Conditions: 150 mM KOAc, 10 mM MgCl2 and 150 mM bicine (pH 8.5), 24 C. The record gives the reactivity of an RNA of 207 nucleotides to DMS and 2A3. For 2A3, 1,683 sequencing reads were counted. The DMS profile rests on 2,438 reads. Reactivities are given for positions 27 through 156. Source: RMDB library OK3TST, as collected in RNAgym.
RNA sequence: GGGAACGACUCGAGUAGAGUCGAAAAGGAUGCUACACUGUCAAAAGCAGCACUUAAUGAGUUACUGAAGCACAUCAAACACAAAGACAGUAAUUAUCAGAGGUGCCUUCUUACAUCAGCGAUUUAUGCACUCCAAGGCCGCAGUGUGGCUGUGCAAUACAUGGCUAGCAUUCGUGCUAGCCAUGUAAAAAGAAACAACAACAACAAC
Reactivity to DMS in 0.01 (KOAc 150mM, MgCl2 10mM, bicine 150mM(pH8.5), 24C), signal-to-noise 2, nucleotides 027 to 156: g000g030a150u000g030c000u000a050c040a070c030u000g010u010c050a080a120a070a010g020c300a130g020c000a150c020u000u000a080a190u010g000a150g030u000u020a010c010u010g020a120a130g020c080a100c040a090u000c050a100a090a180c060a170c080a070a060a170g070a120c010a050g000u000a030a070u000u000a110u000c070a080g010a140g050g030u000g020c000c020u000u000c020u000u000a100c050a100u000c010a080g000c070g000a090u000u000u000a100u020g000c020a070c050u000c000c020a060a090g000g020c000c150g000c000a060g000u000g000u000g040g000c050u010g020u000g020c020a120a260
Reactivity to 2A3 in 0.01 (KOAc 150mM, MgCl2 10mM, bicine 150mM(pH8.5), 24C), signal-to-noise 4, nucleotides 027 to 156: g050g010a040u110g000c000u010a000c000a000c000u040g020u230c070a000a060a080a140g040c050a020g000c000a000c000u080u080a150a040u090g030a030g020u010u000a000c000u020g040a110a060g130c060a090c020a140u140c060a100a250a020c090a030c040a120a170a020g160a040c000a000g020u020a000a010u050u150a020u010c000a000g020a060g080g020u010g010c020c010u100u070c000u020u100a120c050a090u130c040a060g020c040g050a050u040u180u160a120u180g070c040a030c090u040c090c030a080a090g110g000c030c040g000c010a030g000u000g000u010g020g010c020u030g000u000g000c000a000a040